[RMDB]
An RNA of 177 nucleotides, treated with 2A3 and DMS and read out base by base. The DMS profile rests on 1,266 reads. For 2A3, 1,143 sequencing reads were counted. It was measured as part of the RMDB library OK2TST. For DMS the reverse transcriptase was MarathonRT. The reactions ran in a buffer of 150 mM KOAc, 10 mM MgCl2 and 150 mM bicine (pH 8.5), at 24 C.
RNA sequence: GGGAACGACUCGAGUAGAGUCGAAAAGGUCAAUAAGAACUAUAGAGAUGAUCCUGCGAGGAACCCAAUGUGUGCUCAAUCGUGGUAAGCCAGGCUGCGUAGUAGACAACAGGAUAUUUUCGUGGUAGCUGCAGUCAUAUUUCGAUAUGACUGCAGCAAAAGAAACAACAACAACAAC
Reactivity to 2A3 in 0.01 (KOAc 150mM, MgCl2 10mM, bicine 150mM(pH8.5), 24C), signal-to-noise 2, nucleotides 027 to 126: g050g020u050c030a050a050u170a300a000g030a120a030c050u050a070u150a240g060a010g010a050u110g000a000u010c010c000u020g020c040g050a100g020g070a050a040c000c000c000a000a070u120g030u000g030u050g070c010u010c010a060a090u090c080g020u010g040g010u030a070a060g060c010c000a010g050g040c000u040g000c040g010u000a030g050u010a030g030a010c010a080a000c030a050g050g000a000u010a060u110u070u030u050c040g000u050g010g010u020a020
Reactivity to DMS in 0.01 (KOAc 150mM, MgCl2 10mM, bicine 150mM(pH8.5), 24C), signal-to-noise 2, nucleotides 027 to 126: g020g030u010c050a090a080u020a040a120g010a080a090c070u000a110u010a110g020a080g010a090u020g000a070u010c030c010u000g020c070g000a130g010g020a080a120c020c030c010a070a090u020g030u020g030u000g010c050u000c040a080a070u010c070g050u010g020g050u010a080a100g000c020c050a070g010g000c020u000g010c040g010u000a060g020u010a040g000a040c020a080a060c090a090g030g010a080u000a070u010u000u020u010c010g050u000g010g020u000a150